[RMDB]
RNA sequence: GGGAACGACUCGAGUAGAGUCGAAAAUAUACAAAGAUAGCAAAACUGCGGUAACUCCAAUAGAAGGUUCUAUAUUACCUGGGAUAACUAGAGAUACAGUAAAACAUUUAUUGAGAGACCUAGGUUAUCUGAUGUAGUGAUUCGUCACUACAUCAGAAAAAGAAACAACAACAACAAC
Reactivity to 2A3 in 0.01 (KOAc 150mM, MgCl2 10mM, bicine 150mM(pH8.5), 24C), signal-to-noise 2, nucleotides 027 to 126: u060a000u000a000c020a000a180a000g090a120u170a030g060c040a000a010a230a040c010u050g000c040g020g020u040a070a070c010u010c020c010a010a000u010a030g050a040a040g030g000u010u060c050u010a030u000a020u070u040a110c000c010u000g030g000g010a160u120a300a130c060u070a010g000a000g010a090u020a040c090a020g040u130a020a020a100a020c010a020u110u100u050a010u040u140g060a200g000a010g010a080c000c000u010a050g060g000u010u090a020
Reactivity to DMS in 0.01 (KOAc 150mM, MgCl2 10mM, bicine 150mM(pH8.5), 24C), signal-to-noise 3, nucleotides 027 to 126: u010a100u000a110c090a060a120a170g010a120u000a050g010c050a110a090a090a050c040u000g020c240g010g020u000a040a060c030u010c010c010a040a040u010a030g010a040a050g000g010u000u010c040u000a020u000a050u000u000a110c090c000u000g000g000g030a130u000a120a100c030u000a020g020a140g000a090u000a030c080a040g000u000a030a050a030a050c030a040u000u000u010a010u020u000g000a170g000a030g010a050c010c010u000a090g000g000u000u000a080